[RMDB]
RNA sequence: GGGAACGACUCGAGUAGAGUCGAAAAGCUCUGGAAUUGAGGCCCCUCUAACAAUAAUCCAAAACUACUUCGCAGAGUAAACUGCCGAAUCGUAGGAUGCCCAUUACUAUCUAUUUUUGGAGCAUCUAAAACUGUCAGUGCUUCGGCACUGACAGAACCAUUAACAUCUGUUCGCAGAUGUUAAUGGAAAAGAAACAACAACAACAAC
Reactivity to DMS in 0.01 (KOAc 150mM, MgCl2 10mM, bicine 150mM(pH8.5), 24C), signal-to-noise 2, nucleotides 027 to 156: g010c030u000c000u010g000g010a090a060u000u000g020a070g010g000c030c020c010c010u010c050u020a190a130c080a080a090u000a090a150u020c060c050a060a090a130a120c030u000a070c030u000u000c040g000c010a050g000a120g000u010a090a100a110c010u010g010c010c020g040a060a080u020c060g000u000a180g030g010a030u000g000c000c020c000a070u000u000a090c140u000a100u000c110u000a170u000u020u000u000u010g030g030a110g060c000a030u020c000u000a000a000a100a100c010u000g010u000c000a010g010u000g020c020u010u010c300g060g000c000a010c000u000g020a000c000a010g000a050a110
Reactivity to 2A3 in 0.01 (KOAc 150mM, MgCl2 10mM, bicine 150mM(pH8.5), 24C), signal-to-noise 5, nucleotides 027 to 156: g020c000u010c020u010g030g090a160a100u190u060g020a060g030g040c000c010c020c040u100c110u120a120a110c080a060a110u190a030a030u060c030c040a020a050a040a090c010u040a010c010u010u000c010g000c030a000g020a040g070u130a100a130a050c010u000g050c070c050g020a010a040u080c070g010u020a020g020g040a000u010g000c000c000c000a020u040u030a050c060u060a060u210c050u090a230u120u090u010u020u020g020g010a110g010c000a010u000c010u070a050a050a050a090c000u000g000u000c000a000g000u000g000c000u020u060c130g060g000c000a000c000u000g000a000c000a000g000a000a000